An RNA of 177 nucleotides, treated with DMS and 2A3 and read out base by base. The DMS profile rests on 2,123 reads. The reactions ran in a buffer of 150 mM KOAc, 10 mM MgCl2 and 150 mM bicine (pH 8.5), at 24 C. Values cover nucleotides 27 to 126.

RNA sequence: GGGAACGACUCGAGUAGAGUCGAAAAACGGGCAGUGGCGAUGGCAACGCGGCAGCCGCAGGGUCGACUUCUUCGCAGCCGCAACAGACGGGGAACGGGCAAAGAGGGGAUCUCGUUCUGUUGGAAGUAUAGUCGAUCCUUUCGAGGAUCGACUAUAAAAAGAAACAACAACAACAAC
Reactivity to DMS in 0.01 (KOAc 150mM, MgCl2 10mM, bicine 150mM(pH8.5), 24C), signal-to-noise 2, nucleotides 027 to 126: a140c110g000g000g010c030a020g040u000g020g000c040g000a130u000g020g000c060a150a090c150g000c070g020g000c020a010g030c000c070g000c120a120g000g000g000u000c050g020a090c110u000u020c020u050u000c090g030c060a080g050c050c070g020c040a060a020c120a080g050a060c030g000g000g000g020a110a100c070g000g000g050c160a070a060a120g010a160g000g010g020g000a070u020c020u010c030g020u000u000c030u020g020u000u000g000g050a050a090g010
Reactivity to 2A3 in 0.01 (KOAc 150mM, MgCl2 10mM, bicine 150mM(pH8.5), 24C), signal-to-noise 2, nucleotides 027 to 126: a000c060g000g020g000c050a050g050u040g060g000c040g080a080u060g020g020c040a000a030c030g000c000g040g000c020a010g020c010c010g020c050a040g010g050g000u070c030g040a100c000u050u010c010u020u010c070g000c040a040g000c000c020g000c010a000a010c010a030g030a000c000g000g000g000g000a060a070c020g050g000g000c030a080a080a010g040a080g030g010g000g000a030u030c000u000c020g030u120u030c000u040g030u010u030g020g020a050a100g070
Source information: For 2A3, 1,926 sequencing reads were counted.